[RMDB]
RNA sequence: GGGAACGACUCGAGUAGAGUCGAAAAAUAGUUGUACAGUUCCUAUUAUGCGUAUCAAAGAUAAAACUAUGCUGCUGAAACGGAAAUAAAAAAAACCGUUAUUUGGCAGUACACUUUUCUUGCGUCAGCCUGUAAAGGUGUUCGCACCUUUACAGGCAAAAGAAACAACAACAACAAC
Reactivity to 2A3 in 0.01 (KOAc 150mM, MgCl2 10mM, bicine 150mM(pH8.5), 24C), signal-to-noise 1, nucleotides 027 to 126: a000u160a000g000u000u010g080u010a050c090a000g080u000u000c000c040u000a160u110u020a020u150g000c000g060u070a020u200c150a150a040a000g030a060u020a070a060a000a000c100u030a090u130g000c040u000g000c000u040g000a010a010a010c020g020g000a060a260a030u110a080a140a070a070a000a000a000a000c000c000g000u030u000a020u120u000u030g010g010c020a000g050u000a000c000a000c020u020u070u050u020c040u100u020g060c000g070u080c020a040